An RNA of 207 nucleotides, treated with 2A3 and read out base by base. The 2A3 profile rests on 4,283 reads. The data come from the RNA Mapping Database (RMDB), library RNAMAK. The RNA was probed in 150 mM KOAc, 10 mM MgCl2 and 150 mM bicine (pH 8.5) at 24 C.
RNA sequence: GGGAACGACUCGAGUAGAGUCGAAAAGAUAUGGAUCCCAAUACGGUCGCACAAGAGGAUCGAUCGGAAACGAUCGAUCUCCCCACCUUGUGAACUACGACCGUUGGGAUCCUAAGUCAAACAACGUUCCCCUUGGUUCGCCAAGGGGAACGUUGAAGACUCAUAAUGUCUUCGGACAUUAUGAGUCAAAAGAAACAACAACAACAAC
Reactivity to 2A3 in 0.01 (KOAc 150mM, MgCl2 10mM, bicine 150mM(pH8.5), 24C), signal-to-noise 2, nucleotides 027 to 156: g010a000u010a010u030g000g000a000u000c000c000c010a000a010u180a040c020g010g000u010c010g000c050a000c000a000a010g000a000g000g000a000u000c000g000a000u000c010g020g000a000a000a000c000g000a010u000c000g000a000u010c000u010c020c000c010c010a020c000c000u000u000g000u010g010a030a030c090u230a060c210g000a000c000c000g000u000u000g000g000g000a000u000c000c000u000a000a000g000u000c000a050a100a070c000a000a000c000g000u000u000c000c000c000c000u000u030g080g040u130u150c300g040c130c010a000a000g000g000g000g000a000a000c000g000u000u000g000a010a010